Source: RMDB library OK1LIB, as collected in RNAgym. This 177-nucleotide RNA was probed chemically with DMS and 2A3. The RNA was probed in 150 mM KOAc, 10 mM MgCl2 and 150 mM bicine (pH 8.5) at 24 C. As a SHAPE reagent, 2A3 marks flexible, mostly unpaired nucleotides at the ribose 2'-OH.

RNA sequence: GGGAACGACUCGAGUAGAGUCGAAAAUGGCGUGCUAGGGGUUUUACACUUGAUGGAUUGGUAUCCAGUUUCAUUACUGAUCUGCACGCUGAAGAUGGGGACUGGAUAUGCCCCAAUUUAUUAAGUGCAAUUAUAUUGACUUCGGUCAAUAUAAUUGAAAAGAAACAACAACAACAAC
Reactivity to DMS in 0.01 (KOAc 150mM, MgCl2 10mM, bicine 150mM(pH8.5), 24C), signal-to-noise 8, nucleotides 027 to 126: u020g000g000c010g010u000g010c010u020a100g010g010g000g000u010u010u010u010a130c050a020c000u000u000g000a030u000g000g000a010u010u000g000g000u020a010u000c010c010a030g000u000u010u000c040a080u010u020a120c070u010g000a100u030c090u010g010c010a010c020g010c010u000g010a080a040g000a110u020g020g000g010g000a020c010u000g000g000a050u000a070u030g010c110c070c020c000a030a000u000u000u010a020u010u010a020a030g010u000g010
Reactivity to 2A3 in 0.01 (KOAc 150mM, MgCl2 10mM, bicine 150mM(pH8.5), 24C), signal-to-noise 8, nucleotides 027 to 126: u110g030g000c000g000u010g000c030u080a070g010g020g010g020u020u010u050u080a050c040a010c000u010u010g010a010u020g040g020a020u020u030g050g030u060a020u010c000c000a000g000u000u020u030c050a050u040u140a100c020u050g040a070u040c020u060g000c010a010c020g000c000u010g020a020a020g050a040u130g020g000g010g000a000c010u010g010g020a020u020a040u130g020c020c010c000c010a000a000u010u010u010a030u010u030a020a010g010u020g010
For 2A3, 19,241 sequencing reads were counted. The DMS profile rests on 43,284 reads.